Annotation: Structure probing data (DMS and 2A3) for a 177-nucleotide construct. For DMS, 1,156 sequencing reads were counted. The reactions ran in a buffer of 150 mM KOAc, 10 mM MgCl2 and 150 mM bicine (pH 8.5), at 24 C.
[RMDB]
RNA sequence: GGGAACGACUCGAGUAGAGUCGAAAAGAUAUGGAGGCCUGACAUGACUAAGUCUCGGAAACGAGACUAUAGUCAACAGCAGGCUCCUAAGUCAAAACCCAGUAAGCUCUUCGGAGCUUACUGGGAACUACUUCACGUACUUCGGUACGUGAAGUAGAAAAGAAACAACAACAACAAC
Reactivity to DMS in 0.01 (KOAc 150mM, MgCl2 10mM, bicine 150mM(pH8.5), 24C), signal-to-noise 1, nucleotides 027 to 126: g010a030u000a300u010g020g020a000g010g030c030c030u000g020a030c070a230u020g000a030c000u000a010a010g000u010c000u000c000g010g000a120a120a140c010g010a010g000a020c010u010a000u000a000g000u010c000a070a090c190a190g010c010a060g000g030c000u000c000c020u000a050a060g000u010c000a080a080a100a160c000c000c000a000g010u000a000a000g000c000u000c010u000u010c150g010g020a010g000c000u000u000a000c000u000g010g000g000a000a020
Reactivity to 2A3 in 0.01 (KOAc 150mM, MgCl2 10mM, bicine 150mM(pH8.5), 24C), signal-to-noise 1, nucleotides 027 to 126: g000a000u070a060u070g000g030a040g130g300c000c000u010g040a070c030a130u080g000a000c000u030a030a000g010u000c000u010c000g000g010a070a110a030c010g010a000g010a000c000u010a010u010a000g000u020c000a000a000c020a000g060c000a000g000g010c000u010c000c000u000a030a000g000u020c040a010a050a060a220c000c010c000a000g000u000a010a000g000c000u000c060u060u240c300g160g000a000g040c000u000u000a000c000u000g000g000g010a000a000